[RMDB]
Notes
Source: RMDB library M2PK50, as collected in RNAgym. The record gives the reactivity of an RNA of 177 nucleotides to 2A3 and DMS.

RNA sequence: GGGAACGACUCGAGUAGAGUCGAAAAUACGCGAGGUUCGCCUCGCGUAAAAGAGGAGCGUAAACGUGAGCGUACGUAGUGGUGUACAUCGUUCCUACACGAAUGCACAUGGUUUCGACCAUGUGAAGCAGCUAAAUCUAUUCGUAGAUUUAGCUGCAAAAGAAACAACAACAACAAC
Reactivity to 2A3 in 0.01 (KOAc 150mM, MgCl2 10mM, bicine 150mM(pH8.5), 24C), signal-to-noise 7, nucleotides 027 to 126: u050a000c000g000c000g000a000g020g030u060u090c180g070c060c010u000c000g000c000g000u000a000a000a000a010g140a030g030g020a040g020c050g050u110a080a130a040c050g060u090g090a080g100c070g050u060a000c030g020u040a050g120u060g240g070u110g040u070a030c020a060u040c030g010u010u000c020c000u020a040c080a000c020g170a130a060u240g000c000a000c000a020u000g020g000u040u070u070c170g050a020c010c000a000u000g000u010g000a010a010
Reactivity to DMS in 0.01 (KOAc 150mM, MgCl2 10mM, bicine 150mM(pH8.5), 24C), signal-to-noise 5, nucleotides 027 to 126: u000a000c010g010c000g000a020g010g030u010u020c240g020c000c000u010c010g000c000g000u000a000a020a060a090g000a140g000g000a110g010c030g000u000a050a090a060c070g000u010g010a140g020c190g020u000a030c040g010u000a110g020u010g020g000u000g010u000a060c110a150u000c000g000u000u000c000c010u000a070c150a070c110g000a080a060u010g000c000a010c000a010u000g010g000u000u000u010c180g010a040c000c000a010u000g000u000g010a030a120
Background
For DMS the reverse transcriptase was MarathonRT. The DMS profile rests on 6,398 reads. The reactions ran in a buffer of 150 mM KOAc, 10 mM MgCl2 and 150 mM bicine (pH 8.5), at 24 C.